[RMDB]
RNA sequence: GGGAACGACUCGAGUAGAGUCGAAAACAGUCAAUGUGAAGGCGGGCCAGACCAUCGCCGCAUUCUACCAGAGCACCGUCAUGAUCUUUGGCACGAUGGCUCGCUACAUACUCAGAGUUAGGGAAAACACGUCCUGAGGAUUCGUCCUCAGGACGUGAAAAGAAACAACAACAACAAC
Reactivity to DMS in 0.01 (KOAc 150mM, MgCl2 10mM, bicine 150mM(pH8.5), 24C), signal-to-noise 2, nucleotides 027 to 126: c090a130g000u010c110a060a040u000g020u020g000a150a090g010g000c020g020g010g000c000c070a130g000a170c090c060a080u010c070g000c080c020g020c110a070u010u010c100u010a110c070c060a060g000a070g000c100a030c020c030g010u010c080a120u020g000a090u010c030u000u020u010g010g020c020a050c140g020a100u000g010g000c020u000c060g040c030u000a020c070a090u000a010c010u000c040a150g010a070g020u000u010a060g000g000g000a060a060a110a180
Reactivity to 2A3 in 0.01 (KOAc 150mM, MgCl2 10mM, bicine 150mM(pH8.5), 24C), signal-to-noise 2, nucleotides 027 to 126: c120a000g130u130c070a020a110u080g040u040g140a200a080g040g000c030g050g030g000c020c000a030g010a120c000c020a050u060c080g030c040c010g000c000a020u130u020c020u090a090c010c010a050g000a030g030c070a010c070c100g090u110c070a100u170g130a180u070c030u020u090u050g000g000c070a010c070g080a040u060g000g010c000u010c000g000c010u020a010c000a020u140a060c030u050c000a010g040a040g060u020u140a070g000g020g000a050a080a050a070